RNA sequence: GGGAACGACUCGAGUAGAGUCGAAAAUCACUUUGUAAACCUGAUGACAUCGUCAGAGCUUACUGUGCAAGCAACUCUAUGUCGGUGGAAUUAGGCGUAAAAUGACGCAUCCUGCACAUUAGGCGUAAAUUUUACACCGAUUCGUCGGUGUAAAAUUAAAAGAAACAACAACAACAAC
Reactivity to DMS in 0.01 (KOAc 150mM, MgCl2 10mM, bicine 150mM(pH8.5), 24C), signal-to-noise 6, nucleotides 027 to 126: u000c030a060c080u010u000u010g020u000a090a160a060c000c000u000g020a020u000g000a260c050a030u000c010g010u000c030a040g010a050g000c220u000u010a070c020u000g010u000g000c190a150a040g000c070a030a070c040u000c010u000a130u030g010u000c000g030g010u000g000g000a150a020u000u000a010g010g000c030g000u000a040a040a040a050u000g000a030c070g020c110a090u000c020c010u000g000c070a070c090a120u010u010a060g020g020c070g010u000a040
Reactivity to 2A3 in 0.01 (KOAc 150mM, MgCl2 10mM, bicine 150mM(pH8.5), 24C), signal-to-noise 5, nucleotides 027 to 126: u040c010a020c070u120u090u060g090u170a060a040a000c000c000u000g000a010u020g020a020c010a030u040c020g010u010c010a000g010a000g030c010u060u170a060c010u050g010u030g100c080a090a040g000c000a120a300c020u000c010u050a090u140g030u020c010g000g030u010g010g000a020a010u030u010a010g030g000c010g010u060a040a070a040a050u070g030a020c020g000c050a040u060c010c010u070g050c060a040c000a140u130u140a070g010g070c010g030u040a050